[RMDB]
Description
This 177-nucleotide RNA was probed chemically with 2A3 and DMS. The 2A3 profile rests on 3,059 reads.

RNA sequence: GGGAACGACUCGAGUAGAGUCGAAAAUCGGAUAUGUUCGCAUAUCCGAAAAUAAACUUGACACGCGGUCAUGAAAAACGCGAAAAAUAAAAGAACAAACAAAAACGAAGAUCUUCGGAUCUUCGAACCACCUAUACAUGUUCGCAUGUAUAGGUGGAAAAGAAACAACAACAACAAC
Reactivity to 2A3 in 0.01 (KOAc 150mM, MgCl2 10mM, bicine 150mM(pH8.5), 24C), signal-to-noise 3, nucleotides 027 to 126: u020c010g000g010a000u000a010u020g050u020u050c180g000c120a010u000a000u010c000c000g010a000a000a000a000u010a000a030a010c020u010u080g020a020c000a000c070g010c030g020g080u050c030a120u300g190a150a070a020a000a000c000g000c020g240a120a050a040a020a010u150a030a080a040a010g130a140a010c050a090a040a010c020a000a110a050a010a010c010g000a000a000g000a010u000c000u060u120c250g040g000a000u000c000u000u000c000g030a000a010
Reactivity to DMS in 0.01 (KOAc 150mM, MgCl2 10mM, bicine 150mM(pH8.5), 24C), signal-to-noise 1, nucleotides 027 to 126: u000c000g000g000a030u000a040u000g000u000u010c220g130c000a010u000a000u000c000c010g000a000a000a060a030u000a110a070a110c060u000u000g010a110c040a060c000g000c020g000g000u020c010a030u030g000a050a120a020a050a080c060g040c010g000a010a090a030a090a030u000a040a040a030a110g000a090a050c160a030a080a080c120a000a050a020a050a170c030g000a040a000g000a000u000c000u000u000c120g000g000a000u000c000u000u000c000g020a040a060
The data come from the RNA Mapping Database (RMDB), library M2PK50.